Source information: Structure probing data (2A3 and DMS) for a 207-nucleotide construct.
RNA sequence: GGGAACGACUCGAGUAGAGUCGAAAAAUCCCAGCUACUUGGGAGGCUGUGGCAGGAGAAUCGCUUGAACCCGGGAGGUGGAGGCUGCAGUGAGCUGAGAUGGGAAAAAAAGAGAAACACUGUGUUACAUGACCCAUCUUCUUUUUUUGACAUUUAAGCAUUUAAUAGUAUUCGUACUAUUAAAUGCAAAAGAAACAACAACAACAAC
Reactivity to 2A3 in 0.01 (KOAc 150mM, MgCl2 10mM, bicine 150mM(pH8.5), 24C), signal-to-noise 1, nucleotides 027 to 156: a000u000c000c000c000a000g050c040u150a080c000u080u090g030g000g000a040g010g020c060u040g030u020g020g000c030a000g020g020a050g050a060a010u080c030g040c100u080u080g070a060a080c000c010c020g000g060g000a060g060g000u030g010g010a040g000g040c010u010g000c010a010g020u030g100a010g020c060u040g030a010g000a040u010g010g010g070a050a060a000a000a000a060a000g150a020g020a030a120a010c040a000c080u100g010u030g020u120u080a060c040a050u130g050a040c000c000c000a050u000c000u060u050c000u010u060u030u000u010u060u090g100a040c010a020u130u120u080a090a030
Reactivity to DMS in 0.01 (KOAc 150mM, MgCl2 10mM, bicine 150mM(pH8.5), 24C), signal-to-noise 1, nucleotides 027 to 156: a090u010c000c000c010a150g000c050u000a050c000u000u030g020g000g010a100g010g020c030u040g020u030g010g000c010a080g000g000a140g040a040a090u010c080g020c030u000u000g010a050a100c090c000c020g010g000g000a060g040g060u000g020g020a070g010g050c050u000g020c020a080g020u010g000a070g010c080u000g000a060g040a040u020g000g050g030a010a000a100a100a060a060a110g010a080g040a160a080a090c000a190c080u000g010u000g010u000u020a110c080a040u000g010a190c030c000c000a100u000c040u000u010c000u030u000u010u000u000u000u000g000a110c090a100u000u000u000a100a300
The reactions ran in a buffer of 150 mM KOAc, 10 mM MgCl2 and 150 mM bicine (pH 8.5), at 24 C. 2A3 adducts were read by reverse transcription with SuperScript II with manganese. As a SHAPE reagent, 2A3 marks flexible, mostly unpaired nucleotides at the ribose 2'-OH. Source: RMDB library OK3TST, as collected in RNAgym. For DMS the reverse transcriptase was MarathonRT. For 2A3, 888 sequencing reads were counted.